[RMDB]
RNA sequence: GGGAACGACUCGAGUAGAGUCGAAAACGCUAAGAGGAUAUUAGUUUCUGAAACCAUCUCUCUUGAUGCUAUUGAGUUUAUUGAUCAAGAAUUCUAUAAUAUGGUUUAAUUAUGAUGUCUUGAUAUAGGGCCCUCGAGGCGUCCAGGGUCCCCCUGGAGUCAAGGAGUUGUUCGCAACUCCUUGACUAAAAGAAACAACAACAACAAC
Reactivity to 2A3 in 0.01 (KOAc 150mM, MgCl2 10mM, bicine 150mM(pH8.5), 24C), signal-to-noise 1, nucleotides 027 to 156: c000g000c020u020a020a000g000a000g020g020a030u070a080u070u220a150g000u040u190u080c150u220g120a000a010a010c000c020a000u050c070u000c000u000c000u150u000g020a000u000g180c050u130a140u220u150g100a050g140u300u240u220a030u050u150g020a030u020c000a000a000g020a040a130u280u050c080u300a200u120a300a140u290a130u070g000g070u050u050u140a080a000u100u190a080u290g050a050u020g020u070c020u050u130g050a020u100a080u170a300g020g000g000c000c000c000u020c000g020a000g020g000c020g000u000c000c000a000g000g000g000u020c000c000c000c000c000u000g000g000